[RMDB]
RNA sequence: GGGAACGACUCGAGUAGAGUCGAAAAGACCUGGCGCGUUACCUGACCACCGACCCGGCGGGCGAAACCCCCAGUGUCGGUGCGGGUCUAGCCAAGCUCAGGGAGGCGCACCGUCGUGAGACGGCCAACGGUGCGUUAAGUUCGCUUAACGCACCGUAAAAGAAACAACAACAACAAC
Reactivity to 2A3 in 0.01 (KOAc 150mM, MgCl2 10mM, bicine 150mM(pH8.5), 24C), signal-to-noise 2, nucleotides 027 to 126: g070a040c000c030u020g040g000c020g010c010g130u140u100a070c000c000u020g020a020c040c000a000c000c000g000a000c000c000c040g010g020c150g030g010g000c150g120a190a150a180c030c000c000c000c000a030g010u020g010u160c000g000g010u030g010c030g020g000g010u030c080u080a030g050c000c000a070a030g010c010u000c010a000g020g000g000a030g000g050c000g000c020a030c020c000g030u030c020g060u070g100a120g010a020c000g000g010c000c020a090
Reactivity to DMS in 0.01 (KOAc 150mM, MgCl2 10mM, bicine 150mM(pH8.5), 24C), signal-to-noise 2, nucleotides 027 to 126: g010a140c030c000u000g000g000c000g000c000g050u010u030a050c040c000u010g000a030c120c020a000c010c000g000a010c000c000c030g000g050c240g000g000g020c070g000a000a180a300c000c000c000c000c010a030g000u070g000u000c000g000g010u000g000c280g020g000g000u000c130u030a100g000c100c010a280a160g000c110u000c000a000g000g000g000a250g020g030c000g000c010a180c000c000g060u000c050g000u030g000a190g000a070c050g020g110c300c170a110
The data come from the RNA Mapping Database (RMDB), library OK1LIB. The record gives the reactivity of an RNA of 177 nucleotides to 2A3 and DMS. For 2A3 the reverse transcriptase was SuperScript II with manganese. DMS adducts were read by reverse transcription with MarathonRT. The 2A3 profile rests on 2,515 reads. For DMS, 1,545 sequencing reads were counted.